[RMDB]
RNA sequence: GGGAACGACUCGAGUAGAGUCGAAAAUUCAAAUCUGAUUAUAUGACUGUAGCUUUAAUUCAGUGACUUUGUACCAUCCUUAGGAUCAAGUCUAAGCUGCUGAAUUUAGGAGGCAUUAUUACAAGGUGUCUGGUCUCUGCCUUUCUGACAAGUAUUACAUAACUUGGGGAUUCGUCCCCAAGUUAUGAAAAGAAACAACAACAACAAC
Reactivity to DMS in 0.01 (KOAc 150mM, MgCl2 10mM, bicine 150mM(pH8.5), 24C), signal-to-noise 3, nucleotides 027 to 156: u000u010c040a080a090a110u000c040u010g020a150u010u000a130u010a080u010g000a100c060u000g000u000a100g030c050u000u000u000a020a020u000u000c020a010g020u000g010a030c010u000u000u000g000u010a040c040c050a050u000c010c030u010u010a150g020g010a040u000c050a080a080g000u010c030u000a030a040g050c020u000g020c010u000g010a040a030u000u000u000a070g020g000a080g020g020c000a060u000u010a070u010u000a080c080a080a100g020g040u000g020u000c030u000g030g030u000c020u010c050u000g020c020c040u010u010u010c040u010g020a120c060a050a110g010u000a100u000u010a160
Reactivity to 2A3 in 0.01 (KOAc 150mM, MgCl2 10mM, bicine 150mM(pH8.5), 24C), signal-to-noise 4, nucleotides 027 to 156: u070u030c030a030a030a080u040c040u070g050a070u090u170a060u050a080u230g100a060c020u070g040u110a030g080c010u030u040u110a010a000u030u010c010a000g000u000g030a010c010u030u010u020g030u090a020c010c010a010u010c000c010u080u120a090g020g000a020u020c030a050a000g010u000c010u010a000a000g000c010u010g000c000u000g020a010a010u020u060u070a050g030g030a000g030g000c030a010u000u100a030u110u100a140c050a110a060g050g000u020g040u000c040u030g010g050u040c040u010c040u080g050c010c010u040u100u050c050u040g040a050c030a040a010g070u140a070u210u300a040

The data come from the RNA Mapping Database (RMDB), library OK3TST. An RNA of 207 nucleotides, treated with DMS and 2A3 and read out base by base. The reactions ran in a buffer of 150 mM KOAc, 10 mM MgCl2 and 150 mM bicine (pH 8.5), at 24 C. Reactivities are given for positions 27 through 156. The 2A3 profile rests on 3,314 reads.